Structure probing data (DMS and 2A3) for a 177-nucleotide construct. For DMS the reverse transcriptase was MarathonRT.

RNA sequence: GGGAACGACUCGAGUAGAGUCGAAAAGAUAUGGACUGUGCAAGUCCCACGUCGGAAACGACGUGAAGGAUGAUGACCACAGGUCCUAAGUCAAACUGUCGGAAGGUGUUCGCACCUUCCGACAGAAUCACCACAACAUGUUCGCAUGUUGUGGUGAAAAAGAAACAACAACAACAAC
Reactivity to DMS in 0.01 (KOAc 150mM, MgCl2 10mM, bicine 150mM(pH8.5), 24C), signal-to-noise 3, nucleotides 027 to 126: g010a020u030a300u020g000g000a190c010u000g000u000g000c010a080a130g030u000c000c030c000a010c000g010u000c000g000g020a070a090a240c010g010a000c000g000u000g020a070a110g000g000a020u000g000a070u000g000a240c300c010a000c000a010g000g010u000c000c000u000a060a190g010u010c010a040a170a200c030u000g000u000c000g000g000a020a000g010g020u000g020u000u000c200g000c000a010c000c000u000u000c000c000g000a000c000a010g000a080a090
Reactivity to 2A3 in 0.01 (KOAc 150mM, MgCl2 10mM, bicine 150mM(pH8.5), 24C), signal-to-noise 2, nucleotides 027 to 126: g000a000u030a010u130g010g010a000c000u000g020u010g050c040a170a240g020u010c000c000c000a010c000g000u010c000g020g060a090a070a040c000g000a000c010g020u000g030a040a030g000g000a010u050g040a050u060g060a070c020c030a010c020a050g160g150u050c010c010u030a070a030g030u020c030a000a120a150c050u000g000u010c010g000g000a000a000g000g020u020g060u120u270c300g040c150a010c000c000u010u020c000c000g000a000c010a000g000a000a000